[RMDB]
RNA sequence: GGGAACGACUCGAGUAGAGUCGAAAAGCGUACUACUUUCGCCUGUGGAGCGAAGAACUACAUUUCUCUAUCCCAAAUAGGAUAGAGAUGUGUAGGGAGCUCCACUGCGUAGGAUAGCGAAAGUAUCGCAAAACUCCAUACCUUCGGGUAUGGAGAAUCAAUGAGAAUAGUUCGCUAUUCUCAUUGAAAAAGAAACAACAACAACAAC
Reactivity to 2A3 in 0.01 (KOAc 150mM, MgCl2 10mM, bicine 150mM(pH8.5), 24C), signal-to-noise 7, nucleotides 027 to 156: g010c010g040u090a080c030u000a010c000u040u000u010c000g000c000c030u030g000u000g000g010a000g010c010g190a300a030g010a060a000c000u000a000c000a010u000u040u000c000u000c000u000a010u020c020c010c040a200a300a200u300a110g000g000a000u000a000g000a000g000a000u000g000u000g000u000a010g000g000g000a010g000c000u000c010c000a000c000u010g000c020g180u170a130g070g230a180u170a040g000c000g010a000a000a000g000u010a020u300c020g000c020a020a030a040a130c000u000c010c000a000u000a000c000c000u030u090c300g120g000g000u000a000u000g000g000a000g000a000a030
Reactivity to DMS in 0.01 (KOAc 150mM, MgCl2 10mM, bicine 150mM(pH8.5), 24C), signal-to-noise 3, nucleotides 027 to 156: g000c020g000u010a050c100u000a010c000u000u000u000c000g020c000c040u010g010u000g010g000a020g030c000g010a130a120g010a100a180c000u000a010c000a020u000u000u000c000u000c010u000a010u000c000c000c010a060a130a250u000a060g010g000a020u000a010g010a010g020a000u000g010u000g010u010a010g000g000g000a300g010c000u000c000c010a000c000u010g010c130g020u010a120g040g000a210u010a060g010c010g010a020a030a030g020u000a010u000c020g000c010a050a040a080a140c010u000c010c010a020u000a010c000c000u000u000c300g070g010g030u000a010u000g000g010a000g010a010a050